[RMDB]
Chemical mapping of a 177-nucleotide RNA with 2A3 and DMS.
RNA sequence: GGGAACGACUCGAGUAGAGUCGAAAAGUCAGAUAAGGCGAACAGCAAGGAUACCUGCUGUUUUCUGAAUCUUGGAGAUAUUCUUAUCAGAGAUAGGUCCAAAAGACUUUCUGCCAGGCGAUGUUAGAUAAGAUGCUUUCUUCGGAAAGCAUCUUAUAAAAGAAACAACAACAACAAC
Reactivity to 2A3 in 0.01 (KOAc 150mM, MgCl2 10mM, bicine 150mM(pH8.5), 24C), signal-to-noise 3, nucleotides 027 to 126: g050u040c020a000g010a040u010a060a020g010g030c020g020a000a020c000a000g030c020a030a140g080g010a200u220a300c030c000u000g040c000u000g000u000u000u000u010c010u030g010a030a040u000c000u030u110g020g000a010g000a050u070a060u170u140c020u050u200a200u130c090a040g010a000g020a150u050a080g170g170u020c010c000a110a000a000a000g010a000c000u050u070u010c020u010g080c030c000a090g090g030c100g050a060u130g050u140u090a060g010
Reactivity to DMS in 0.01 (KOAc 150mM, MgCl2 10mM, bicine 150mM(pH8.5), 24C), signal-to-noise 4, nucleotides 027 to 126: g000u000c030a120g030a010u010a030a300g000g000c050g000a020a020c000a000g010c010a010a050g000g000a240u050a090c100c050u000g010c010u000g030u000u000u000u000c020u000g000a290a030u010c020u010u030g020g010a030g010a060u010a040u020u010c030u000u010a100u030c280a110g000a010g000a010u000a040g020g010u010c010c020a030a030a110a080g000a020c000u000u020u010c060u020g010c030c010a060g000g010c140g010a050u000g000u000u020a070g010
Conditions: 150 mM KOAc, 10 mM MgCl2 and 150 mM bicine (pH 8.5), 24 C.